RNA sequence: GGGAACGACUCGAGUAGAGUCGAAAAGAUAUGGAGUGGACCGCCAGGUAUCUCGGAAACGAGCCGAGCCUGGAACUACGGUUGGCCACUCCUAAGUCAAACGCCUCUGUGUUCGCACAGAGGCGAAGCUAAAUCAUUACUUCGGUAAUGAUUUAGCAAAAGAAACAACAACAACAAC
Reactivity to 2A3 in 0.01 (KOAc 150mM, MgCl2 10mM, bicine 150mM(pH8.5), 24C), signal-to-noise 5, nucleotides 027 to 126: g010a010u070a030u190g000g000a000g000u010g000g020a070c000c020g000c000c000a000g030g030u140a240u190c040u000c010g030g050a220a300a190c150g030a110g090c050c030g030a030g000c000c000u010g000g060a010a010c070u220a030c030g030g090u140u190g270g050c000c010a000c000u000c000c000u000a050a010g010u000c040a100a050a150c020g000c010c000u000c000u020g010u000g050u080u110c300g020c120a010c000a010g000a000g010g000c000g000a010a000
Reactivity to DMS in 0.01 (KOAc 150mM, MgCl2 10mM, bicine 150mM(pH8.5), 24C), signal-to-noise 4, nucleotides 027 to 126: g000a040u000a300u000g010g010a040g020u000g000g000a110c020c010g000c010c010a000g020g010u000a090u010c010u010c010g010g000a070a050a120c150g010a070g020c300c100g000a080g000c010c000u010g010g000a040a030c090u020a300c040g000g000u010u000g030g010c010c010a020c000u010c010c010u000a020a110g000u000c020a110a160a250c030g020c000c010u000c000u000g010u000g000u000u010c200g010c000a000c010a000g000a000g010g010c010g000a010a020